Structure probing data (2A3) for a 177-nucleotide construct. The 2A3 profile rests on 361 reads. Reactivities are given for positions 27 through 126. Conditions: 150 mM KOAc, 10 mM MgCl2 and 150 mM bicine (pH 8.5), 24 C. The data come from the RNA Mapping Database (RMDB), library OK1LIB.

[RMDB]
RNA sequence: GGGAACGACUCGAGUAGAGUCGAAAACAAAGAUUGGAGUCUACUGGUCCAGUGUUCAAGGUGAUGGGCCAAUUCCUAGGAUACCCCAAUCUAAUCUGGAGAACUCAUGAAUUCUUUGAGAAAAGUCACCGGAGCAAUUGUUCGCAAUUGCUCCGGUAAAAGAAACAACAACAACAAC
Reactivity to 2A3 in 0.01 (KOAc 150mM, MgCl2 10mM, bicine 150mM(pH8.5), 24C), signal-to-noise 1, nucleotides 027 to 126: c020a000a300a000g090a000u000u090g000g000a020g000u080c170u060a040c120u030g000g000u010c000c000a000g170u010g040u280u300c020a160a000g070g200u110g180a150u000g050g010g000c000c070a000a030u080u140c030c040u060a050g000g000a040u050a150c000c000c090c000a000a000u000c000u030a000a090u070c110u000g010g010a020g000a020a020c020u030c000a030u100g110a070a140u230u080c060u000u000u090g070a020g010a010a020a020a010g190u090c100